[RMDB]
RNA sequence: GGGAACGACUCGAGUAGAGUCGAAAACUUAAUAGUUAGAAAUAAGAUUCUUAGGUUAGUUUUGAUAGUUUAGCCCUGUUAUAUGGCGUUUUAUCAAAGCGAAUUUUAAGUAAUAUAACUAUGAUCGUAGAUGUUAACGACGAAAUACGUUUGGACACAGUAUAUUCAUGUUCGCAUGAAUAUACUGAAAAGAAACAACAACAACAAC
Reactivity to DMS in 0.01 (KOAc 150mM, MgCl2 10mM, bicine 150mM(pH8.5), 24C), signal-to-noise 2, nucleotides 027 to 156: c040u000u000a080a040u000a020g020u010u010a000g010a180a130a220u000a100a210g010a250u000u000c000u000u000a020g010g030u010u000a030g000u000u000u010u000g000a010u000a030g000u000u000u000a150g000c020c010c060u010g020u000u010a130u010a090u000g000g030c000g000u000u000u000u000a000u000c010a010a010a030g000c010g000a010a020u010u010u010u000a010a030g010u000a130a090u000a140u000a010a020c020u000a040u000g020a120u000c070g010u000a080g020a180u000g010u010u000a050a110c100g030a120c010g060a110a060a120u000a090c060g030u000u000u000g020g000a190c150a120
Reactivity to 2A3 in 0.01 (KOAc 150mM, MgCl2 10mM, bicine 150mM(pH8.5), 24C), signal-to-noise 3, nucleotides 027 to 156: c020u080u130a010a040u020a170g030u040u060a040g060a060a220a130u190a140a070g030a160u150u030c030u060u040a040g050g000u050u030a010g020u000u100u010u000g000a000u000a020g060u030u160u120a000g020c010c000c000u040g080u160u080a130u050a060u090g000g010c010g020u070u070u080u010a000u020c000a000a000a000g000c020g030a030a030u070u110u090u150a010a000g000u000a000a050u030a010u000a060a000c000u000a020u190g030a050u060c020g010u030a040g020a230u140g080u150u150a080a010c020g020a000c010g020a050a110a030u180a030c070g000u000u040u130g030g020a010c030a000

Structure probing data (DMS and 2A3) for a 207-nucleotide construct. The data come from the RNA Mapping Database (RMDB), library ARCHII. Conditions: 150 mM KOAc, 10 mM MgCl2 and 150 mM bicine (pH 8.5), 24 C. For 2A3 the reverse transcriptase was SuperScript II with manganese. For 2A3, 2,016 sequencing reads were counted. Reactivities are given for positions 27 through 156. Values are in units of 0.01, from 0 to 300, in steps of 10. DMS adducts were read by reverse transcription with MarathonRT.